RNA sequence: GGGAACGACUCGAGUAGAGUCGAAAAGAUAUGGAUUGAACUACAAUUUAGUAGGCGUUGAAAUCGGAAACGAUGGAGCCUACGAAGAUUGCAAUCCUAAGUCAAAACCCUACGUUCGCGUAGGGAAUCGUAGUUAUGAGUUCGCUCAUAACUACGAAAAAGAAACAACAACAACAAC
Reactivity to DMS in 0.01 (KOAc 150mM, MgCl2 10mM, bicine 150mM(pH8.5), 24C), signal-to-noise 4, nucleotides 027 to 126: g000a020u000a300u010g000g000a020u000u000g010a080a040c080u000a300c010a010a010u000u000u010a300g000u000a000g020g010c000g000u000u020g000a090a110a030u000c000g010g000a140a080a210c010g000a010u010g000g000a180g010c000c000u000a000c010g000a100a120g000a000u000u000g000c010a020a000u000c000c000u010a050a160g010u010c020a070a050a140a160c010c000c000u000a000c000g000u000u010c190g000c020g020u000a000g000g010g020a020a010
Reactivity to 2A3 in 0.01 (KOAc 150mM, MgCl2 10mM, bicine 150mM(pH8.5), 24C), signal-to-noise 3, nucleotides 027 to 126: g040a020u040a040u130g010g000a010u000u020g020a140a020c050u180a050c280a010a000u170u230u010a050g000u000a000g010g000c030g160u300u120g030a080a100a010u010c000g010g000a060a030a040c000g000a000u010g000g060a020g000c010c010u000a000c000g000a000a000g000a000u010u030g030c010a000a010u000c000c000u000a140a000g030u040c020a010a030a100a300c000c000c000u000a000c010g020u020u070c300g000c000g130u000a000g020g010g000a000a100

Chemical mapping of a 177-nucleotide RNA with DMS and 2A3.
For DMS the reverse transcriptase was MarathonRT.
For DMS, 4,334 sequencing reads were counted.